[RMDB]
RNA sequence: GGGAACGACUCGAGUAGAGUCGAAAAGUCGGUGAUCCUGCCUCUCCUUGUCGGUGAAUCCUCCCCUGGAGGGCCUCUUCCUAGGUCCGGAGUCUACCUCCAUCUGGUCUGUUCGGGCCCUCUUCGCCGGGGGAGCCCCCUCUCCAUCCUUAUCCUUGUUAGAUUAUUUCUUCGGAAAUAAUCUAACAAAAGAAACAACAACAACAAC
Reactivity to 2A3 in 0.01 (KOAc 150mM, MgCl2 10mM, bicine 150mM(pH8.5), 24C), signal-to-noise 1, nucleotides 027 to 156: g100u080c070g020g000u010g020a120u060c000c030u020g030c010c010u050c030u050c050c020u020u100g110u160c080g040g040u080g140a160a170u110c000c020u010c000c010c060c010u010g050g000a010g000g000g010c020c010u050c010u060u040c000c010u030a020g000g020u030c090c070g030g010a000g010u000c090u180a120c040c010u000c000c000a010u020c080u070g030g000u030c010u070g060u140u160c070g000g000g000c000c000c000u020c040u050u030c000g020c010c000g000g010g000g020g020a000g000c000c000c000c030c000u030c000u020c000c000a110u070c020c020u170u060a080u150c000c000u010u000